RNA sequence: GGGAACGACUCGAGUAGAGUCGAAAAGAUUAUGUGGGAGAGGCGCCCUUUCGUUUCAUCGGAUAAUUAAUUGCCAGUCGCUGGCUUUAGCGAUGUUGAUGUCAUCUGUAGCGAUGACUAUGCUACCUUAAGGUAUGAUCCGGAUACCCCCGGUAAAAUGAUAUAUGGGAUUCGUCCCAUAUAUCAUAAAAGAAACAACAACAACAAC
Reactivity to 2A3 in 0.01 (KOAc 150mM, MgCl2 10mM, bicine 150mM(pH8.5), 24C), signal-to-noise 3, nucleotides 027 to 156: g030a060u130u140a060u190g050u110g010g010g010a030g000a010g050g060c030g020c030c040c090u040u100u090c110g020u130u080u030c080a070u080c030g070g010a060u050a180a040u230u150a060a070u160u280g030c020c010a050g110u140c030g040c120u030g010g030c070u130u060u060a010g000c000g020a020u040g040u070u070g020a050u050g010u010c000a010u000c020u060g190u170a020g070c030g070a010u000g010a000c010u000a030u080g070c020u010a010c000c010u080u210a100a050g020g000u030a010u060g030a030u060c000c020g000g000a010u080a070c040c020c020c000c000g000g020u030a030a080a000
Reactivity to DMS in 0.01 (KOAc 150mM, MgCl2 10mM, bicine 150mM(pH8.5), 24C), signal-to-noise 3, nucleotides 027 to 156: g000a150u000u000a060u000g020u000g020g010g010a160g030a110g020g030c040g010c080c020c020u010u010u010c060g010u010u000u000c040a090u000c040g020g000a110u010a080a110u010u000a070a110u010u010g030c030c040a120g000u000c010g030c010u000g010g000c080u010u000u000a040g010c010g010a060u010g010u010u000g010a200u000g010u000c010a020u000c020u000g050u000a150g020c120g010a050u000g010a040c030u000a050u000g030c000u000a040c020c020u010u000a090a080g010g000u010a060u000g010a100u010c030c040g030g000a120u000a190c020c000c010c030c070g010g010u000a040a060a090
Structure probing data (2A3 and DMS) for a 207-nucleotide construct. For 2A3, 1,329 sequencing reads were counted. The RNA was probed in 150 mM KOAc, 10 mM MgCl2 and 150 mM bicine (pH 8.5) at 24 C. For DMS the reverse transcriptase was MarathonRT.